RNA sequence: GGGAACGACUCGAGUAGAGUCGAAAAGACACGAGAAAUCUUGUCGGAAGAUAGGAGGACCAUCUCCUAAGGCUAAAUACUCCUUGGUGACCGAUAGUGAACUAGUACCGUGAGGGAAAGGUGAAAAGAAAGAGAUCGGUUUCGACCGAUCUCUUUCAAAAGAAACAACAACAACAAC
Reactivity to DMS in 0.01 (KOAc 150mM, MgCl2 10mM, bicine 150mM(pH8.5), 24C), signal-to-noise 1, nucleotides 027 to 126: g020a030c030a020c060g000a020g010a160a090a100u000c020u000u010g010u000c000g030g000a170a110g010a130u000a020g000g000a030g000g000a220c180c100a060u000c030u000c040c080u010a000a190g020g020c080u000a000a020a030u000a060c040u000c000c030u000u090g000g000u000g040a100c030c010g000a070u010a050g020u000g000a060a090c070u000a100g020u000a090c000c010g020u000g000a100g000g000g000a020a120a040g000g010u000g010a060a080a060a150